Source: RMDB library RFM100, as collected in RNAgym.
An RNA of 177 nucleotides, treated with DMS and 2A3 and read out base by base.
2A3 is a SHAPE reagent: it acylates the 2'-hydroxyl of flexible nucleotides of all four kinds.
RNA sequence: GGGAACGACUCGAGUAGAGUCGAAAAGAGUAUCGAGGAAUACUUCAUAGAGAGUUUCUCUCUGUGGGGAUGACGGCUGCGAUGCUGGGGUUGGCCCAAACCGCUGACAAGCGUCAGCCGACGAUUGCCUCUCUUCUUCCUUCGGGAAGAAGAGAGGAAAAGAAACAACAACAACAAC
Reactivity to DMS in 0.01 (KOAc 150mM, MgCl2 10mM, bicine 150mM(pH8.5), 24C), signal-to-noise 2, nucleotides 027 to 126: g000a080g000u010a020u000c030g000a080g000g020a110a040u060a050c000u000u000c020a000u000a010g000a000g020a020g020u010u000u010c000u000c010u040c000u000g040u000g030g010g000g000a060u000g000a130c150g050g020c110u000g080c190g000a020u000g040c000u000g010g000g030g030u000u000g000g000c040c000c020a030a100a070c080c170g000c020u020g030a010c050a150a000g000c140g000u030c000a000g000c000c030g040a080c090g020a130u000u030g000
Reactivity to 2A3 in 0.01 (KOAc 150mM, MgCl2 10mM, bicine 150mM(pH8.5), 24C), signal-to-noise 3, nucleotides 027 to 126: g040a030g070u140a020u070c060g030a070g060g120a130a110u070a300c000u010u000c000a010u010a010g000a000g000a000g030u020u070u080c050u010c000u000c010u010g000u000g000g010g000g020a020u050g080a030c050g010g000c000u000g030c080g050a060u040g000c020u010g050g010g000g000u020u130g090g030c000c000c040a040a040a000c050c020g010c100u040g010a080c020a280a070g010c020g080u120c010a010g000c010c010g010a020c020g030a090u010u150g020
Record summary:
For 2A3, 1,754 sequencing reads were counted. For DMS, 2,071 sequencing reads were counted.